[RMDB]
RNA sequence: GGGAACGACUCGAGUAGAGUCGAAAAGAUAUGGAGCUUUGACCAGCAACAGCAACGGUCGGAAACGACCGUUGACAUGCUGAAGUCACGGAGCUCCUAAGUCAAAAUCGUGCCUUCGGGCACGAAACACACAUGUAAUGUUCGCAUUACAUGUGUGAAAAGAAACAACAACAACAAC
Reactivity to 2A3 in 0.01 (KOAc 150mM, MgCl2 10mM, bicine 150mM(pH8.5), 24C), signal-to-noise 6, nucleotides 027 to 126: g030a010u080a040u180g010g000a010g020c010u080u070u080g100a220c020c000a010g000c020a020a130c050a210g080c000a010a000c000g000g010u010c020g000g030a090a090a040c030g000a000c000c000g010u000u000g010a020c000a040u070g000c000u030g060a260a060g010u020c030a020c260g080g010a010g000c000u000c000c000u000a120a010g030u010c040a000a010a020a300u070c000g010u000g000c000c000u030u110c300g040g000g000c010a000c010g000a000a020a000
Reactivity to DMS in 0.01 (KOAc 150mM, MgCl2 10mM, bicine 150mM(pH8.5), 24C), signal-to-noise 8, nucleotides 027 to 126: g010a050u000a300u010g010g000a010g030c010u000u000u000g000a060c010c000a020g010c000a030a090c300a240g000c010a010a010c000g000g010u000c000g000g000a100a120a210c010g020a010c000c000g010u000u010g010a030c080a190u000g000c000u000g000a150a130g010u000c040a090c300g010g000a020g000c000u000c000c010u000a020a090g010u000c070a100a050a120a090u000c000g020u000g000c000c000u000u010c270g030g010g010c000a010c000g000a000a080a200
The data come from the RNA Mapping Database (RMDB), library TTRDES.
This 177-nucleotide RNA was probed chemically with 2A3 and DMS.
The DMS profile rests on 10,444 reads.
Values cover nucleotides 27 to 126.
For DMS the reverse transcriptase was MarathonRT.